[RMDB]
RNA sequence: GGGAACGACUCGAGUAGAGUCGAAAAAACUGGAGAUGUAGAGCAUAGAUACCAUGAUAUGGCUACAAAACAUGGGGGAAUUCCCACGAACCUGAUCCAGCUAUACACACACGCAUCAUGCAAUACGGAUCCCGUUAUCUUUCGAGAUAACGGGAUCAAAAGAAACAACAACAACAAC
Reactivity to DMS in 0.01 (KOAc 150mM, MgCl2 10mM, bicine 150mM(pH8.5), 24C), signal-to-noise 2, nucleotides 027 to 126: a060a070c070u000g010g000a060g000a160u000g000u020a060g010a120g010c000a020u000a060g000a090u000a170c150c180a020u000g000a140u010a050u000g010g010c030u030a060c020a030a130a080a030c130a030u010g000g020g000g020g010a100a230u010u000c000c000c030a300c130g010a110a150c010c020u000g000a100u000c050c020a050g030c040u000a030u010a130c070a030c080a050c040a070c110g000c030a020u010c100a050u000g020c080a090a090u010a040c200g020
Reactivity to 2A3 in 0.01 (KOAc 150mM, MgCl2 10mM, bicine 150mM(pH8.5), 24C), signal-to-noise 1, nucleotides 027 to 126: a000a010c100u080g050g020a140g040a100u050g050u030a040g030a040g050c040a020u040a030g040a050u150a120c070c080a080u170g000a050u040a010u010g040g000c000u000a000c060a020a120a060a000c050a120u100g000g000g000g010g060a000a080u030u010c010c000c000a040c010g040a010a030c000c000u000g020a000u010c030c000a000g040c050u080a060u040a020c060a010c040a000c010a000c050g030c000a090u110c000a000u090g030c000a040a100u140a150c040g080
Notes: An RNA of 177 nucleotides, treated with DMS and 2A3 and read out base by base. For DMS, 1,054 sequencing reads were counted. High DMS reactivity at an A or C suggests that its Watson-Crick edge is free.